[RMDB]
RNA sequence: GGGAACGACUCGAGUAGAGUCGAAAAGCCGUGGUCGGUGGCAGAUCAGGGCAAGCGCAACGUCACCCACGGCUGCAUCAACCUCAGCCCGGCCAACGCGAAGUGGUUCUACGACAACUUCGGCAGCUGAACGUGGUUUCUUCGGAAACCACGUUCAAAAAGAAACAACAACAACAAC
Reactivity to DMS in 0.01 (KOAc 150mM, MgCl2 10mM, bicine 150mM(pH8.5), 24C), signal-to-noise 1, nucleotides 027 to 126: g000c000c000g000u000g040g000u070c040g050g000u000g000g010c060a080g000a140u010c230a020g000g000g000c060a040a140g000c090g090c140a060a200c110g170u000c000a000c030c000c000a000c000g000g000c000u000g000c300a000u040c160a030a120c010c000u000c060a080g000c000c050c130g030g030c000c030a110a200c270g000c140g000a040a040g020u090g000g000u000u000c150u000a170c110g030a040c110a150a240c080u000u000c000g000g040c140a190g070c020
Reactivity to 2A3 in 0.01 (KOAc 150mM, MgCl2 10mM, bicine 150mM(pH8.5), 24C), signal-to-noise 2, nucleotides 027 to 126: g000c010c000g020u000g050g040u240c170g010g040u010g050g020c050a020g010a170u170c040a020g070g010g090c050a110a070g120c010g000c090a110a070c080g010u000c000a030c000c000c000a010c040g000g000c000u000g000c000a040u070c060a010a040c000c000u050c020a010g020c000c000c000g000g000c000c000a060a020c050g000c000g140a070a000g010u050g060g030u100u030c050u160a070c080g070a030c000a090a040c030u020u030c010g030g020c000a020g010c060